Conditions: 150 mM KOAc, 10 mM MgCl2 and 150 mM bicine (pH 8.5), 24 C. An RNA of 177 nucleotides, treated with DMS and 2A3 and read out base by base. It was measured as part of the RMDB library TTRDEL. For 2A3, 48,205 sequencing reads were counted. Reactivities are given for positions 27 through 126.

RNA sequence: GGGAACGACUCGAGUAGAGUCGAAAAGAUAUGGAACGAAUGUACGAACUACGAAUCGCUGGUCGGAAACGACCAGAUUCGCGUACACUAUUCCUAAGUCAAACUGUUCGUCUUCGGACGAACAGAAGUGAUAUAAUGAGUUCGCUCAUUAUAUCACAAAAGAAACAACAACAACAAC
Reactivity to DMS in 0.01 (KOAc 150mM, MgCl2 10mM, bicine 150mM(pH8.5), 24C), signal-to-noise 9, nucleotides 027 to 126: g010a040u000a300u000g000g000a000a020c100g010a050a070u000g020u000a010c000g000a100a070c180u020a300c030g000a010a000u000c070g010c210u000g000g010u000c000g010g000a070a090a160c010g010a000c000c000a030g000a010u000u000c000g000c010g000u000a000c000a010c070u000a280u000u000c000c000u010a080a140g000u010c020a110a100a190c010u000g000u000u000c010g010u000c000u000u010c220g010g000a020c000g000a000a000c000a000g000a030a070
Reactivity to 2A3 in 0.01 (KOAc 150mM, MgCl2 10mM, bicine 150mM(pH8.5), 24C), signal-to-noise 9, nucleotides 027 to 126: g010a010u070a040u120g000g010a030a020c070g060a300a300u040g000u000a000c010g040a190a080c130u130a050c300g010a010a020u040c130g020c300u050g000g000u010c000g000g030a050a060a050c010g000a000c000c000a000g000a000u000u000c000g000c010g000u010a000c010a000c020u030a050u030u000c010c000u030a100a020g050u030c050a040a070a130c030u010g000u000u000c000g020u000c010u030u060c300g150g000a000c000g000a000a010c000a000g000a040a010